[RMDB]
RNA sequence: GGGAACGACUCGAGUAGAGUCGAAAAAGUGGGCCGGAGGGGCUUUGGCGAAGGCCUUUGCUUUGCUUCUCCGGCCCUAAAGUGGCAGGCACAGCGUGAGGCUGGCUUCACAGAGCAGCGAUCACUGCCCGCUUCCAUCGGUGGAAGGAUAACAGGCGAUUAGACAUUUGUUCGCAAAUGUCUAAUCAAAAGAAACAACAACAACAAC
Reactivity to 2A3 in 0.01 (KOAc 150mM, MgCl2 10mM, bicine 150mM(pH8.5), 24C), signal-to-noise 1, nucleotides 027 to 156: a000g080u050g000g000g020c010c010g010g000a000g030g010g000g000c000u050u050u100g010g010c020g030a010a040g170g060c030c050u030u020u040g000c000u130u110u050g000c000u020u000c000u000c000c020g000g010c000c000c000u010a000a000a000g020u000g000g000c030a060g000g000c020a010c010a090g040c060g040u090g040a000g070g100c030u000g000g130c000u060u060c080a090c010a050g030a000g000c020a000g020c010g070a010u030c010a000c040u020g000c000c010c000g030c000u030u000c000c010a020u080c090g050g060u070g020g070a080a040g010g040a010u040a120a080c040a050g130g020c040
Reactivity to DMS in 0.01 (KOAc 150mM, MgCl2 10mM, bicine 150mM(pH8.5), 24C), signal-to-noise 1, nucleotides 027 to 156: a110g020u010g000g010g050c030c020g010g010a040g000g010g020g020c010u000u000u010g010g020c040g020a070a080g000g010c200c090u010u000u010g030c040u000u000u010g010c020u000u000c010u000c000c110g030g000c000c000c000u000a000a030a070g010u000g010g030c050a070g000g010c060a160c060a070g030c020g010u000g030a190g010g010c000u000g030g000c080u000u000c050a110c190a120g000a060g030c000a100g000c000g000a150u000c070a090c010u010g040c000c010c040g000c030u000u000c020c010a080u010c130g020g040u010g000g000a050a070g010g020a110u000a050a150c090a070g000g020c200